An RNA of 207 nucleotides, treated with DMS and 2A3 and read out base by base.
Reactivities are given for positions 27 through 156.
DMS adducts were read by reverse transcription with MarathonRT.
The DMS profile rests on 5,518 reads.
The RNA was probed in 150 mM KOAc, 10 mM MgCl2 and 150 mM bicine (pH 8.5) at 24 C.

RNA sequence: GGGAACGACUCGAGUAGAGUCGAAAAUUCCGUCUUCGGACGGAACGCGGCGUACUACGAUUGCAAUCCGACCCAACGUUGAUCACAGGUCCCAAAUAGGACCUGUGGGAGUUGCGGAUUUCCCAAUCGUAUCGCAAAUCCGGCUUUUCGAAGCCGGGAACGUAAAAAAAUUCGUUUUUUUACGUUCAAAAGAAACAACAACAACAAC
Reactivity to DMS in 0.01 (KOAc 150mM, MgCl2 10mM, bicine 150mM(pH8.5), 24C), signal-to-noise 2, nucleotides 027 to 156: u000u010c000c000g030u010c000u000u000c300g050g020a020c010g000g000a020a010c020g010c070g010g050c020g070u020a070c100u000a020c020g000a030u000u000g060c120a040a060u000c020c010g010a210c150c180c020a020a020c010g000u000u000g010a090u000c000a010c010a000g020g000u000c000c000c020a050a170a270u010a040g010g010a000c010c000u000g030u000g010g000g010a070g020u000u000g000c020g010g010a040u000u010u000c090c090c010a010a040u000c010g040u000a030u010c040g000c040a120a070a120u010c000c000g010g020c000u020u000u000u000c140g020a060a050g030c000c000g030g000
Reactivity to 2A3 in 0.01 (KOAc 150mM, MgCl2 10mM, bicine 150mM(pH8.5), 24C), signal-to-noise 4, nucleotides 027 to 156: u050u010c000c000g000u010c000u040u050c210g160g000a010c030g000g030a020a000c090g050c090g120g000c030g020u110a110c060u000a010c030g000a000u010u010g010c050a020a020u010c000c020g080a130c180c060c000a010a000c010g200u280u030g010a010u020c000a000c000a010g000g000u010c020c020c030a170a290a060u270a090g000g000a000c000c000u000g000u000g000g000g000a030g000u010u010g000c010g010g000a000u010u010u060c020c020c000a000a010u000c000g000u020a050u300c010g000c000a010a050a050u050c010c000g020g000c010u050u070u090u130c170g090a010a000g000c010c020g000g000